This 177-nucleotide RNA was probed chemically with 2A3 and DMS. For 2A3, 11,692 sequencing reads were counted. Conditions: 150 mM KOAc, 10 mM MgCl2 and 150 mM bicine (pH 8.5), 24 C. The data come from the RNA Mapping Database (RMDB), library M2PK50.
[RMDB]
RNA sequence: GGGAACGACUCGAGUAGAGUCGAAAACACUCACGAUUCGUCGUGAGUGAAAGAACGCCAAAGUGACGCAAUCUUCCGCGUCAGGAAGGCGAAACGAGGUUAAAACCGGGUCCUUCGGGACCCGGAACUGAUGAAUACGUUUCGACGUAUUCAUCAGAAAAGAAACAACAACAACAAC
Reactivity to 2A3 in 0.01 (KOAc 150mM, MgCl2 10mM, bicine 150mM(pH8.5), 24C), signal-to-noise 6, nucleotides 027 to 126: c010a000c000u010c000a000c000g020a010u070u060c170g050u010c010g000u140g010a000g000u010g000a000a000a000g030a110a020c020g000c010c000a050a070a010g120u010g000a000c000g020c010a030a130u080c130u200u030c130c080g010c030g010u010c000a000g020g020a050a020g000g000c020g000a020a010a010c060g060a060g080g040u120u190a040a080a020a040c010c000g020g000g010u010c010c000u040u090c210g070g000g000a000c010c000c000g000g000a000a000
Reactivity to DMS in 0.01 (KOAc 150mM, MgCl2 10mM, bicine 150mM(pH8.5), 24C), signal-to-noise 6, nucleotides 027 to 126: c000a010c000u010c000a020c000g020a030u000u000c160g020u010c000g030u000g010a020g010u000g000a020a040a100g010a100a160c050g020c010c010a030a100a300g000u000g000a070c000g020c010a110a110u030c140u010u000c190c130g010c040g000u000c030a040g000g000a200a140g010g000c000g000a020a080a070c090g000a130g000g010u010u010a050a060a120a110c000c000g000g000g010u000c000c000u000u010c160g040g010g000a010c000c000c010g000g000a010a020